[RMDB]
Conditions: 150 mM KOAc, 10 mM MgCl2 and 150 mM bicine (pH 8.5), 24 C. An RNA of 207 nucleotides, treated with 2A3 and read out base by base. The 2A3 profile rests on 500 reads.

RNA sequence: GGGAACGACUCGAGUAGAGUCGAAAAUAUCACAGAGGCAAUGUAUCAGGAAAUGGAACGGCUGAUUGCUGAUGCCAAACCUGCAAGCCGUCACCUUAUUGGCCUGAACAUUACCCGGGACAUUCCCGGCUAUCUGUUCGCCGGUGGUGUGGCUUACCUUUAGCCCUUCGUUCGCGAAGGGCUAAAGAAAAGAAACAACAACAACAAC
Reactivity to 2A3 in 0.01 (KOAc 150mM, MgCl2 10mM, bicine 150mM(pH8.5), 24C), signal-to-noise 1, nucleotides 027 to 156: u260a090u120c060a030c000a070g100a100g030g000c140a130a020u060g010u060a220u110c000a000g000g070a040a170a020u130g040g020a070a010c010g050g000c030u020g090a220u030u210g020c030u030g050a100u150g080c040c050a030a140a150c000c020u090g000c010a000a000g010c000c000g030u060c010a200c000c000u230u150a110u040u150g040g100c060c100u010g010a000a000c000a000u040u060a000c060c060c060g000g000g020a040c040a180u210u160c000c000c000g000g010c000u050a130u030c100u060g050u060u030c030g000c010c000g110g000u040g080g000u000g000u000g000g010c000u000u000a020c010
Values cover nucleotides 27 to 156. The data come from the RNA Mapping Database (RMDB), library OK3TST.